[RMDB]
RNA sequence: GGGAACGACUCGAGUAGAGUCGAAAAACGUCGCCGGAUACGUCCGGCGACGAAGGUCAAUGAUGUCCUAAACUACGAUUUAAUUCGAAUUACUGUGAGAUAAAAUCAUAUAUGCAACUGAGACAAAUACUAGAGCUCUCUUCGGAGAGCUCUAGUAAAAAGAAACAACAACAACAAC
Reactivity to 2A3 in 0.01 (KOAc 150mM, MgCl2 10mM, bicine 150mM(pH8.5), 24C), signal-to-noise 2, nucleotides 027 to 126: a000c000g000u000c000g010c000c000g030g130a000u000a070c300g040u130c000c000g000g000c020g000a000c000g010a010a000g000g000u080c080a160a080u130g040a000u070g150u090c060c000u190a180a150a130c050u120a040c010g070a080u000u000u300a220a050u110u070c000g000a030a110u100u190a010c080u130g000u050g170a040g040a030u150a090a120a000a000u040c170a000u050a010u080a000u190g120c100a060a110c170u270g010a000g000a120c040a000a090a050

An RNA of 177 nucleotides, treated with 2A3 and read out base by base. The 2A3 profile rests on 433 reads. The reactions ran in a buffer of 150 mM KOAc, 10 mM MgCl2 and 150 mM bicine (pH 8.5), at 24 C.